This 207-nucleotide RNA was probed chemically with 2A3. The 2A3 profile rests on 542 reads. Values are in units of 0.01, from 0 to 300, in steps of 10.
RNA sequence: GGGAACGACUCGAGUAGAGUCGAAAAGGUAGGCGUCCAGCUCGAUGAUCCACUGGCGGAAGGCCGGACGAAGGUCUCGGCUUAGCAGGUACUGCGCGGCGUUGUCAGUCGGCGUUCGGCGCAUCCACAGCACCUCGGCCUCCGCCAGCGGGUUUUGAUCACACCCUGGUUUCGACCAGGGUGUGAUAAAAGAAACAACAACAACAAC
Reactivity to 2A3 in 0.01 (KOAc 150mM, MgCl2 10mM, bicine 150mM(pH8.5), 24C), signal-to-noise 1, nucleotides 027 to 156: g230g020u100a050g030g000c080g040u020c030c000a130g010c070u060c110g150a190u190g000a000u040c010c000a010c000u000g000g000c000g020g020a070a120g010g030c000c060g020g010a110c200g130a110a060g020g040u070c040u080c160g140g000c010u000u050a010g000c060a060g010g020u080a130c040u000g000c000g040c020g020g010c010g000u000u000g020u040c260a280g050u200c010g010g030c000g020u080u240c120g250g000c000g020c000a060u160c030c020a050c000a000g030c030a020c000c000u020c030g000g000c000c020u000c000c030g000c010c000a000g000c000g000g000g000u000u000u070u130g010